RNA sequence: GGGAACGACUCGAGUAGAGUCGAAAAAAAAAAAGAUAUGGACCGUUGGUGGACUUUUGACGAAGUGAAACCUCGGAAACGAGGUAUAAGCUUCGAUAAGUCCACCACCGGUCCUAAGUCAAAAAAAUCUUAUCACAAUGUUCGCAUUGUGAUAAGAAAAAGAAACAACAACAACAAC
Reactivity to DMS in 0.01 (KOAc 150mM, MgCl2 10mM, bicine 150mM(pH8.5), 24C), signal-to-noise 1, nucleotides 027 to 126: a000a000a010a050a010a010a030g000a040u010a300u010g000g000a000c010c000g010u000u000g000g000u000g020g000a020c000u010u000u010u010g030a280c210g000a010a000g010u010g020a130a150a100c020c000u000c000g030g000a090a040a130c010g010a000g000g000u000a000u020a080a300g000c000u000u010c000g000a160u000a000a000g020u010c010c010a000c010c000a000c030c050g000g020u010c020c010u000a000a030g000u010c000a000a000a010a120a060a130a080

An RNA of 177 nucleotides, treated with DMS and read out base by base.
Values cover nucleotides 27 to 126.
The data come from the RNA Mapping Database (RMDB), library TTRDES.
The RNA was probed in 150 mM KOAc, 10 mM MgCl2 and 150 mM bicine (pH 8.5) at 24 C.